[RMDB]
RNA sequence: GGGAACGACUCGAGUAGAGUCGAAAAAAUUUAAAACUAAUGCAGGGUGCCCUUUCACAAGCAAGUGGAGACACUUUUUUGAUCUGCACCCAGCAUGUAACGUGACUGGUUGGGCCCUAUCAUUAGGAAACUACGAACAUUUCGAUGUUCGUAGUUUAAAAGAAACAACAACAACAAC
Reactivity to DMS in 0.01 (KOAc 150mM, MgCl2 10mM, bicine 150mM(pH8.5), 24C), signal-to-noise 3, nucleotides 027 to 126: a050a060u000u000u010a050a060a100a130c000u000a020a010u000g000c170a230g020g000g010u010g020c010c010c020u000u000u000c090a060c060a080a080g020c110a050a050g010u000g000g010a160g000a170c020a020c090u000u000u000u000u000u000g000a090u010c070u000g000c100a080c140c020c010a050g010c010a030u000g000u000a030a070c240g000u000g010a070c040u000g000g010u000u010g000g010g010c000c000c010u000a100u010c020a020u000u000a010g000g000
Notes
This 177-nucleotide RNA was probed chemically with DMS. The RNA was probed in 150 mM KOAc, 10 mM MgCl2 and 150 mM bicine (pH 8.5) at 24 C. Reactivities are given for positions 27 through 126. Source: RMDB library OK2TST, as collected in RNAgym.